An RNA of 207 nucleotides, treated with DMS and 2A3 and read out base by base. Conditions: 150 mM KOAc, 10 mM MgCl2 and 150 mM bicine (pH 8.5), 24 C.
RNA sequence: GGGAACGACUCGAGUAGAGUCGAAAAGGAAGUCUACGACGCCUCGGUCAAGCGCUAUAUAUCUGCGAUUUCACAUGUGCUGCCUCAAGUGCCCAGGGAUAUCAUCAGCGUUCGCAUGGCUUUUCUUGUCGGCGCAUAUCUUUUCAUGCUCAAUGACGAACCAGAAUGUUUUCGAACAUUCUGGUUCAAAAGAAACAACAACAACAAC
Reactivity to DMS in 0.01 (KOAc 150mM, MgCl2 10mM, bicine 150mM(pH8.5), 24C), signal-to-noise 1, nucleotides 027 to 156: g010g000a050a110g000u010c020u000a140c020g030a050c030g000c010c020u000c040g000g050u010c060a070a070g000c070g010c020u000a110u010a100u020a080u010c070u010g040c020g000a190u000u010u010c050a100c070a160u000g040u010g000c000u010g010c050c000u000c030a050a150g020u010g000c010c010c020a160g000g030g010a060u000a080u000c020a080u000c070a110g020c040g020u000u000c040g060c080a080u000g030g020c050u020u000u000u000c040u000u000g000u000c020g050g030c080g040c050a080u000a110u000c000u030u000u010u010c050a120u000g020c040u000c060a100a100u000g010a160c180
Reactivity to 2A3 in 0.01 (KOAc 150mM, MgCl2 10mM, bicine 150mM(pH8.5), 24C), signal-to-noise 4, nucleotides 027 to 156: g050g020a030a020g050u010c010u040a040c050g060a030c030g040c010c000u070c040g010g000u030c060a070a010g060c020g000c070u030a040u010a010u020a020u210c060u050g060c040g080a100u030u080u160c100a100c020a090u120g010u060g050c020u020g020c000c030u070c050a070a040g040u030g050c000c000c030a020g030g000g000a030u040a010u080c070a010u000c040a010g060c020g070u090u060c030g000c080a050u060g030g000c000u090u050u060u000c020u030u050g060u060c030g020g020c000g020c030a010u040a070u110c040u020u090u060u100c030a010u080g020c090u080c070a040a110u300g020a020c300